[RMDB]
RNA sequence: GGGAACGACUCGAGUAGAGUCGAAAAUGCCACCCCUGAUGAGACCGAAAGGUCGAAAUGGGGUCUCGCCAUGGGACAGAACUAAAUUCGGAGGAUUCGUCCUUUAAUCGUUCCUCCAAGGGUCCUCGACACAUCCUGAGUUCGCUCAGGAUGUGUCAAAAGAAACAACAACAACAAC
Reactivity to 2A3 in 0.01 (KOAc 150mM, MgCl2 10mM, bicine 150mM(pH8.5), 24C), signal-to-noise 1, nucleotides 027 to 126: u080g030c020c020a070c020c010c020c010u020g020a070u070g020a090g010a030c000c000g130a130a030a030g000g000u000c000g010a000a000a000u070g030g010g000g010u010c010u030c020g030c040c030a130u100g020g030g010a000c020a030g150a190a120c090u120a030a080a200u190u100c070g000g020a000g000g030a040u070u040c030g010u120c020c000u060u220u130a120a050u120c000g010u010u020c000c010u020c070c010a030a050g080g020g020u020c000c000u060c060
Reactivity to DMS in 0.01 (KOAc 150mM, MgCl2 10mM, bicine 150mM(pH8.5), 24C), signal-to-noise 2, nucleotides 027 to 126: u050g020c100c150a160c020c020c000c000u040g000a060u000g000a300g000a000c000c000g000a130a070a220g010g000u000c010g010a060a030a100u000g000g000g000g040u000c030u000c080g010c100c120a020u000g020g020g010a050c060a080g000a110a110c090u000a060a050a220u000u000c110g000g020a020g000g000a040u000u000c080g010u010c120c060u040u000u000a120a080u010c060g000u010u000c000c040u000c040c080a010a010g000g000g030u000c010c020u000c210

Source information
This 177-nucleotide RNA was probed chemically with 2A3 and DMS. The data come from the RNA Mapping Database (RMDB), library VIROID. Reactivities are given for positions 27 through 126. For DMS the reverse transcriptase was MarathonRT. Conditions: 150 mM KOAc, 10 mM MgCl2 and 150 mM bicine (pH 8.5), 24 C.